[RMDB]
RNA sequence: GGGAACGACUCGAGUAGAGUCGAAAAUCCAACUCCGGCUGGUGUGAAGAAGGAGCCGUUCCACGCAGGACACGAACAAGAAGAAGCCGAAGCAACUUCAGGUCGCCGCGCACGUACUGUCGCUCGAUCUCCGCCUCGCUCGAGUAGGUUUCCCCGGCGUAUAUAAAUUCUUCGGAAUUUAUAUACGAAAAGAAACAACAACAACAAC
Reactivity to 2A3 in 0.01 (KOAc 150mM, MgCl2 10mM, bicine 150mM(pH8.5), 24C), signal-to-noise 4, nucleotides 027 to 156: u050c020c010a070a040c060u040c040c020g080g000c040u050g040g060u070g020u070g090a120a200g030a080a040g110g040a040g030c030c020g060u040u020c040c020a120c090g040c080a110g000g080a040c030a010c150g130a180a030c060a100a060g120a040a000g020a040a000g060c030c050g100a050a000g020c060a040a100c030u100u100c050a020g050g010u010c010g010c090c040g000c020g040c030a020c060g110u250a130c050u180g070u170c040g010c000u010c020g030a080u000c020u000c040c010g010c000c000u000c020g000c000u010c010g000a000g000u010a050g050g120u040u030u030c000c000c000c000g010g000
Conditions: 150 mM KOAc, 10 mM MgCl2 and 150 mM bicine (pH 8.5), 24 C. This 207-nucleotide RNA was probed chemically with 2A3. 2A3 adducts were read by reverse transcription with SuperScript II with manganese. As a SHAPE reagent, 2A3 marks flexible, mostly unpaired nucleotides at the ribose 2'-OH.